The record gives the reactivity of an RNA of 177 nucleotides to DMS and 2A3.
RNA sequence: GGGAACGACUCGAGUAGAGUCGAAAACUGACACUGACCAGCGCAUUGUCAACAAAGCGGAUAUGAACGUGACCAUUGGACUGGGUGGUGAUUUCAUCAUGCACAGAAAUAACUGUGCCUCGCUGGAAUAGGUAUACGUGUUCGCACGUAUACCUAUAAAAGAAACAACAACAACAAC
Reactivity to DMS in 0.01 (KOAc 150mM, MgCl2 10mM, bicine 150mM(pH8.5), 24C), signal-to-noise 5, nucleotides 027 to 126: c110u000g020a060c030a030c080u000g010a140c000c020a010g010c020g010c020a040u000u000g010u000c010a060a130c200a070a070a100g010c080g010g010a090u000a050u010g010a040a050c140g030u000g010a060c030c010a050u000u010g010g010a070c160u010g000g000g040u000g000g010u000g000a070u010u000u000c030a040u000c140a070u010g010c010a020c000a020g000a100a120a090u010a090a110c020u000g000u000g000c000c200u000c030g000c010u000g000g000a240
Reactivity to 2A3 in 0.01 (KOAc 150mM, MgCl2 10mM, bicine 150mM(pH8.5), 24C), signal-to-noise 5, nucleotides 027 to 126: c030u030g020a000c010a010c010u060g040a080c000c000a000g000c010g000c040a020u030u020g010u030c010a020a040c030a080a220a000g100c060g100g020a070u060a050u250g070a050a030c060g030u030g070a030c010c010a040u040u090g080g070a140c110u100g080g060g030u020g000g010u050g040a090u030u060u060c030a040u010c020a060u160g020c010a000c000a010g120a040a200a060u270a140a070c010u010g000u000g000c030c020u020c020g030c000u010g000g000a020

For DMS the reverse transcriptase was MarathonRT.
It was measured as part of the RMDB library OK2TST.
2A3 adducts were read by reverse transcription with SuperScript II with manganese.